About this RNA
The data come from the RNA Mapping Database (RMDB), library M2PK90. An RNA of 177 nucleotides, treated with DMS and 2A3 and read out base by base. DMS (dimethyl sulfate) methylates the pairing face of unpaired adenines and cytosines. For DMS, 867 sequencing reads were counted. Reactivities are given for positions 27 through 126. Conditions: 150 mM KOAc, 10 mM MgCl2 and 150 mM bicine (pH 8.5), 24 C.

RNA sequence: GGGAACGACUCGAGUAGAGUCGAAAAUCAAAUAUAAAAGCUGAGAUGAGCUCAGCAAGGGUAUUUUUCGAGAGAUGAGCUCUCGUACCCUAUCCCUUGCUCCGGAAACGGUAGCUUUUACAAAAAACUUUACACAUUACUUCGGUAAUGUGUAAAGAAAAGAAACAACAACAACAAC
Reactivity to DMS in 0.01 (KOAc 150mM, MgCl2 10mM, bicine 150mM(pH8.5), 24C), signal-to-noise 1, nucleotides 027 to 126: u030c110a050a080a110u010a150u000a020a010a020a050g010c000u010g020a020g000a300u020g010a190g050c050u000c010a000g030c010a000a010g020g000g000u010a070u010u000u000u000u000c020g000a030g000a000g020a250u010g010a110g010c010u000c000u010c000g000u000a020c070c010c020u000a230u010c000c000c000u000u000g000c000u000c020c000g020g000a140a100a070c040g000g000u000a030g000c010u000u000u000u000a010c140a000a060a060a050a070a070
Reactivity to 2A3 in 0.01 (KOAc 150mM, MgCl2 10mM, bicine 150mM(pH8.5), 24C), signal-to-noise 1, nucleotides 027 to 126: u060c010a000a080a000u190a000u010a040a040a000a000g000c010u000g020a000g000a180u210g090a020g110c000u000c000a000g000c000a010a000g040g000g010u020a030u050u140u010u130u140c010g000a010g000a010g040a080u290g200a090g140c000u010c000u000c000g020u050a080c010c010c000u000a030u170c000c000c010u000u040g000c020u010c000c000g010g030a060a090a040c010g000g050u020a000g060c000u030u030u020u070a030c060a010a180a000a020a000a000